[RMDB]
RNA sequence: GGGAACGACUCGAGUAGAGUCGAAAACAUAAGACCUCAGAGCUAAUGAGCCACAUACCUACCCAAGGUCAAAGCUCCUUCUCUCGCAAUGUGUAACUCAUGAUUCUCAUGACCCCUGGUUGGAGAGCGCGCUAACACGCCUUCGGGCGUGUUAGAAACGAUUAACGAGAUUCGUCUCGUUAAUCGUAAAAGAAACAACAACAACAAC
Reactivity to 2A3 in 0.01 (KOAc 150mM, MgCl2 10mM, bicine 150mM(pH8.5), 24C), signal-to-noise 2, nucleotides 027 to 156: c030a040u130a060a010g080a070c000c060u060c070a010g030a010g010c070u100a080a090u100g020a010g010c070c010a090c010a120u200a080c010c010u060a110c030c030c030a050a030g030g000u070c040a090a100a030g020c020u000c000c020u070u070c050u040c010u030c030g060c080a060a150u060g070u020g030u100a080a050c020u030c040a010u040g050a170u300u010c070u020c060a050u090g020a070c000c000c000c030u050g020g000u020u000g040g020a060g000a010g050c120g000c000g010c030u000a000a000c000a000c010g010c010c010u040u090c110g020g000g000c000g000u000g000u000u000a000g000a000a000
Reactivity to DMS in 0.01 (KOAc 150mM, MgCl2 10mM, bicine 150mM(pH8.5), 24C), signal-to-noise 1, nucleotides 027 to 156: c030a130u010a040a040g040a090c000c050u000c040a160g020a090g030c050u020a080a100u000g000a030g030c050c050a060c030a090u000a100c040c050u000a120c040c040c040a090a070g010g040u000c010a080a140a170g020c140u000c020c050u010u000c010u010c030u010c060g000c070a050a080u010g010u010g000u000a080a020c040u000c000a020u000g010a110u010u000c050u000c020a100u010g020a090c050c000c010c010u000g040g030u010u000g000g000a090g030a060g020c070g000c060g000c000u010a040a020c000a000c010g040c010c010u000u000c300g040g030g060c010g120u010g000u000u000a000g000a030a090